[RMDB]
RNA sequence: GGGAACGACUCGAGUAGAGUCGAAAAUGCCCGCUGGUCACCAAGGUGCACAACGAGGCCAGGCGGUUCGCCCGGGACGACUACGACAUCUUGCUGAUCGGUCAUGAGGGCCACGAGGAAGUCGUCGCCCCUAAUGCAGCUUCGGCUGCAUUAGGGGAAAAGAAACAACAACAACAAC
Reactivity to DMS in 0.01 (KOAc 150mM, MgCl2 10mM, bicine 150mM(pH8.5), 24C), signal-to-noise 2, nucleotides 027 to 126: u010g020c080c010c000g010c000u000g010g020u000c010a070c150c000a030a040g000g010u010g000c040a030c140a070a020c030g000a300g000g010c010c040a200g030g010c010g010g010u000u010c090g030c020c000c060g020g000g010a060c030g000a300c110u000a050c020g010a130c040a050u000c000u000u000g010c240u010g010a010u000c040g010g000u000c060a130u010g000a060g010g010g020c010c030a060c050g000a090g000g020a100a030g010u010c010g030u000c190g010
Reactivity to 2A3 in 0.01 (KOAc 150mM, MgCl2 10mM, bicine 150mM(pH8.5), 24C), signal-to-noise 2, nucleotides 027 to 126: u060g050c020c000c020g000c030u040g020g000u000c000a040c050c000a040a030g070g000u080g000c060a060c050a200a170c050g030a040g020g090c000c000a000g050g000c010g040g190u180u280c100g000c000c020c000g000g030g000a090c060g020a060c030u100a050c130g100a050c020a020u000c010u020u060g000c020u010g000a040u030c010g030g020u030c000a140u150g210a190g000g050g000c010c020a020c040g030a050g050g150a190a000g050u030c010g010u050c050g050
Chemical mapping of a 177-nucleotide RNA with DMS and 2A3.
2A3 adducts were read by reverse transcription with SuperScript II with manganese.
Conditions: 150 mM KOAc, 10 mM MgCl2 and 150 mM bicine (pH 8.5), 24 C.
Source: RMDB library OK2TRN, as collected in RNAgym.
Values cover nucleotides 27 to 126.